[RMDB]
Background:
The record gives the reactivity of an RNA of 177 nucleotides to DMS. Source: RMDB library OK2TST, as collected in RNAgym. Reactivities are rounded to 0.1 and cut off at 0 and 3.
RNA sequence: GGGAACGACUCGAGUAGAGUCGAAAAAUCUGACUCUAAGAAAGCCAGGGCUUGGCCUCCUAUCUGGAGCUCAAAGUGUAUCUUCUCCGCGCACCCCAACCCCGGGCCACGGGCAUCUGAGGUCAAGUGAAUCAGAAAUCUUCGGAUUUCUGAUUCAAAAAGAAACAACAACAACAAC
Reactivity to DMS in 0.01 (KOAc 150mM, MgCl2 10mM, bicine 150mM(pH8.5), 24C), signal-to-noise 1, nucleotides 027 to 126: a060u010c030u020g000a040c010u000c010u010a130a130g000a170a110a060g010c010c000a080g010g000g030c050u000u010g030g000c160c000u010c000c140u000a060u020c120u000g000g000a060g010c200u010c070a060a070a090g060u000g010u010a070u010c070u000u000c040u000c030c080g010c070g000c080a140c050c020c030c040a090a120c060c010c000c130g040g000g000c000c000a040c130g000g010g000c020a010u000c080u000g010a040g010g010u000c030a040a140g010